[RMDB]
RNA sequence: GGGAACGACUCGAGUAGAGUCGAAAAGACAUGACGUUCGCGUCAUGUCAAAUAAAUAAAAGAUCGUAGCUAGGGACGAUCAAAAGCUAGCAAAAAUAAAAAAAACCAUCUGGUUCGCCAGAUGGAACUUAAGAAGAUAGUUCGCUAUCUUCUUAAGAAAAGAAACAACAACAACAAC
Reactivity to 2A3 in 0.01 (KOAc 150mM, MgCl2 10mM, bicine 150mM(pH8.5), 24C), signal-to-noise 4, nucleotides 027 to 126: g000a010c000a010u010g000a010c030g040u040u070c230g030c000g090u000c000a000u010g010u020c000a010a000a000u010a000a020a010u160a010a070a020a020g090a030u040c010g020u010a020g030c040u050a020g060g060g070a030c010g030a030u080c070a010a130a000a020g040c040u100a010g050c050a030a050a060a100a110u210a080a070a060a020a010a010a020a070c000c000a000u000c000u000g000g050u060u060c170g050c020c000a000g000a000u000g010g000a000a000
Reactivity to DMS in 0.01 (KOAc 150mM, MgCl2 10mM, bicine 150mM(pH8.5), 24C), signal-to-noise 2, nucleotides 027 to 126: g010a010c010a010u000g000a000c000g010u010u000c210g040c000g000u000c010a000u000g010u010c000a010a040a050u010a050a090a070u000a100a040a150a120g010a050u000c010g000u000a090g000c040u000a030g010g000g010a030c030g010a050u020c110a080a060a100a050g020c100u010a030g010c080a020a100a070a090a060u090a050a010a060a080a080a050a160a100c010c010a000u000c010u010g010g010u000u000c170g010c000c000a020g010a010u000g000g010a010a030

Structure probing data (2A3 and DMS) for a 177-nucleotide construct. DMS adducts were read by reverse transcription with MarathonRT. Reactivities are given for positions 27 through 126. Conditions: 150 mM KOAc, 10 mM MgCl2 and 150 mM bicine (pH 8.5), 24 C. High DMS reactivity at an A or C suggests that its Watson-Crick edge is free. The data come from the RNA Mapping Database (RMDB), library M2PK50. The DMS profile rests on 2,295 reads.